[RMDB]
RNA sequence: GGGAACGACUCGAGUAGAGUCGAAAACUUAACCUGGCAGAUCAGAAAAACUAGACAAGGCCGGUUGUAUCAAGCUGAUCUGAGCUUUGUCCAGAGGUACUUAUUACCUAAGUUGCCAGUGGAACACAAUACAUGAGCCCUUCGGGGCUCAUGUAUUAAAAGAAACAACAACAACAAC
Reactivity to DMS in 0.01 (KOAc 150mM, MgCl2 10mM, bicine 150mM(pH8.5), 24C), signal-to-noise 1, nucleotides 027 to 126: c050u000u010a070a190c090c000u010g000g000c010a000g020a110u010c130a150g000a040a100a030a060a170c000u060a050g050a010c000a000a000g000g010c030c060g000g000u070u000g010u000a040u010c220a100a110g010c160u010g000a000u020c010u040g050a130g010c000u000u000u010g000u000c000c040a000g000a040g000g000u000a000c250u040u000a090u000u000a000c000c060u000a170a170g000u080u000g070c000c010a050g010u000g000g000a160a090c250a020c200
Reactivity to 2A3 in 0.01 (KOAc 150mM, MgCl2 10mM, bicine 150mM(pH8.5), 24C), signal-to-noise 2, nucleotides 027 to 126: c000u000u110a080a110c000c010u000g070g000c030a050g000a150u050c000a040g240a220a300a020a000a000c000u020a020g000a000c000a040a020g000g000c000c000g070g010u000u040g140u050a190u230c140a110a010g100c110u100g050a090u000c000u140g040a120g050c000u010u000u020g000u000c020c000a000g000a030g070g000u000a030c010u100u300a110u230u000a070c000c000u030a120a140g080u000u000g010c000c000a060g000u250g130g000a140a000c120a000c030
Record summary
The record gives the reactivity of an RNA of 177 nucleotides to DMS and 2A3. Reactivities are given for positions 27 through 126. The reactions ran in a buffer of 150 mM KOAc, 10 mM MgCl2 and 150 mM bicine (pH 8.5), at 24 C. For DMS the reverse transcriptase was MarathonRT. For 2A3, 414 sequencing reads were counted.